[RMDB]
RNA sequence: GGGAACGACUCGAGUAGAGUCGAAAAGCCGCAUGAUAAAAGGAGUAGGUCUGGGUGAGAUAGAUUUCAACAUCUGCGGCCUCACCGGGGCUAUAGACCUAUCCUUGUUAUCAAAUAUCUUAGCCCCCUAUAUAACUUAUUUCGAUAAGUUAUAUAGAAAAGAAACAACAACAACAAC
Reactivity to 2A3 in 0.01 (KOAc 150mM, MgCl2 10mM, bicine 150mM(pH8.5), 24C), signal-to-noise 4, nucleotides 027 to 126: g010c000c010g010c050a090u080g010a010u050a020a290a000a000g010g000a040g140u030a000g000g000u000c000u000g040g000g000u000g000a000g000a020u100a050g060a010u040u120u130c040a020a000c010a050u000c010u010g010c010g050g020c000c000u000c000a010c000c000g010g000g010g000c000u010a000u050a060g000a000c000c000u000a000u000c000c000u000u010g040u070u020a010u010c000a000a010a000u110a010u000c010u000u010a000g000c000c000c000c000
Reactivity to DMS in 0.01 (KOAc 150mM, MgCl2 10mM, bicine 150mM(pH8.5), 24C), signal-to-noise 5, nucleotides 027 to 126: g010c030c030g010c080a190u020g010a020u000a000a070a030a030g010g000a040g010u010a000g010g000u000c000u010g010g020g010u000g000a010g000a130u020a030g000a030u000u010u040c270a100a130c210a020u000c010u000g000c020g030g000c080c010u000c000a000c010c020g000g010g020g010c050u010a040u040a020g000a010c000c000u000a010u000c000c000u000u000g010u000u020a010u010c020a010a100a140u060a070u030c010u020u010a040g000c010c000c000c150